[RMDB]
RNA sequence: GGGAACGACUCGAGUAGAGUCGAAAAUAUCUUGCUACUGAUCAGGCUAUGCGUGAUCAGAAGUAUGAUAUUCGCGAGGGCAAGAAACCUGGUGCUUUCGGUAACAUUGAGCGAUUCAUUUAUCUUAAGUCGAUAAAUGCUUAUUGCUCUCUUAGCGGGAAACGUGAUAGUUCGCUAUCACGUUUCCAAAAGAAACAACAACAACAAC
Reactivity to 2A3 in 0.01 (KOAc 150mM, MgCl2 10mM, bicine 150mM(pH8.5), 24C), signal-to-noise 2, nucleotides 027 to 156: u020a000u010c010u030u080g010c000u030a050c010u000g000a000u000c020a030g030g100c130u190a070u300g030c050g220u040g010a010u000c000a000g020a020a010g010u020a020u050g000a000u000a030u120u130c060g000c020g050a020g020g010g020c010a070a090g050a110a130a020c020c060u090g100g020u080g010c000u010u010u050c010g000g020u040a080a010c000a120u090u100g010a000g000c000g030a000u000u000c010a000u000u000u010a030u000c030u040u230a200a150g140u170c030g000a000u000a000a000a000u000g000c010u030u050a010u000u010g000c000u000c000u000c010u030u150a050g050c190g020